[RMDB]
RNA sequence: GGGAACGACUCGAGUAGAGUCGAAAAGAAGUAAAAGGCCAAUUGGUAAACAACUUGGAUUGCAAAACAGACAUCAAAGAAAAGAAGAUUGUUGAUGACAAGGCUUCUGAUCCAAGUUCCUCCAAGAAUGCGUUUACUAAUUCGUUAGUAAACGCAUAAAAGAAACAACAACAACAAC
Reactivity to 2A3 in 0.01 (KOAc 150mM, MgCl2 10mM, bicine 150mM(pH8.5), 24C), signal-to-noise 3, nucleotides 027 to 126: g010a040a000g010u110a030a150a040a020g090g000c030c020a060a160u080u090g020g000u080a130a100a050c020a020a010c030u020u010g000g020a030u010u090g060c040a000a060a140a080c040a060g110a070c020a020u100c060a070a070a130g180a090a130a010a000g080a030a000g020a040u030u070g040u020u080g170a120u140g010a010c020a040a020g130g020c000u000u000c010u040g020a020u010c000c000a000a000g000u000u030c010c010u050c000c010a000a010g060a060
Reactivity to DMS in 0.01 (KOAc 150mM, MgCl2 10mM, bicine 150mM(pH8.5), 24C), signal-to-noise 4, nucleotides 027 to 126: g030a090a080g020u000a040a080a130a110g010g010c060c070a080a150u020u000g000g030u010a070a100a110c140a010a030c020u000u000g000g000a020u010u010g010c170a070a060a110a080c160a110g020a120c060a040u000c100a050a050a100g000a050a060a080a070g000a070a040g010a120u010u000g000u000u000g000a110u010g010a050c040a030a080g000g020c040u000u000c030u000g010a040u000c020c020a010a030g000u000u000c070c050u000c050c080a070a090g020a110